[RMDB]
RNA sequence: GGGAACGACUCGAGUAGAGUCGAAAAUCUGUGAUACCCCGCGGCUAUCCUGACCAGAACCUCGCGACACUACAGGCCUUUCCACCUUCCUGCCAGAUUAGUGCCUACCACCAGCUAGCUGAGGAACCGCAAUCAGCACUUUCGAGUGCUGAUUGCGAAAAGAAACAACAACAACAAC
Reactivity to DMS in 0.01 (KOAc 150mM, MgCl2 10mM, bicine 150mM(pH8.5), 24C), signal-to-noise 1, nucleotides 027 to 126: u000c040u010g030u020g020a110u020a160c020c010c060c060g040c020g000g000c080u000a060u000c030c010u010g000a060c100c040a080g010a130a060c070c010u020c020g040c020g010a020c100a070c030u000a050c230a100g000g000c050c040u010u010u010c080c010a080c070c040u010u000c030c030u000g010c020c050a060g000a070u010u000a090g010u000g010c030c000u000a090c080c020a120c070c060a020g040c060u000a060g000c050u000g020a120g050g020a060a070c100

Source: RMDB library OK2TRN, as collected in RNAgym. Structure probing data (DMS) for a 177-nucleotide construct. The RNA was probed in 150 mM KOAc, 10 mM MgCl2 and 150 mM bicine (pH 8.5) at 24 C. Values cover nucleotides 27 to 126.